Source: RMDB library M2PK90, as collected in RNAgym. The record gives the reactivity of an RNA of 177 nucleotides to DMS. DMS adducts were read by reverse transcription with MarathonRT. Reactivities are given for positions 27 through 126. The reactions ran in a buffer of 150 mM KOAc, 10 mM MgCl2 and 150 mM bicine (pH 8.5), at 24 C.
RNA sequence: GGGAACGACUCGAGUAGAGUCGAAAAUUAUAACGUGGCUGCCCGGCCUGGAACAGUCCCACAACCUGCUCCAGAAGGACCCAAGGUUGACAGAUCCAUUCAGACCUAUGCUAAGGAAACAAAAUAAUCUAUGUUUUACCUUCGGGUAAAACAUAGAAAAAGAAACAACAACAACAAC
Reactivity to DMS in 0.01 (KOAc 150mM, MgCl2 10mM, bicine 150mM(pH8.5), 24C), signal-to-noise 1, nucleotides 027 to 126: u000u020a080u020a040a130c120g020u010g000g000c020u000g020c060c000c040g000g020c000c010u010g010g020a040a020c100a060g000u000c030c020c090a170c110a040a120c060c020u000g000c050u000c010c000a050g000a120a160g000g010a080c040c010c040a030a010g000g010u010u010g020a070c180a040g000a050u000c000c020a100u020u000c040a130g010a130c040c000u000a030u000g010c050u000a070a050g030g010a110a130a020c050a040a040a030a070u020a030a100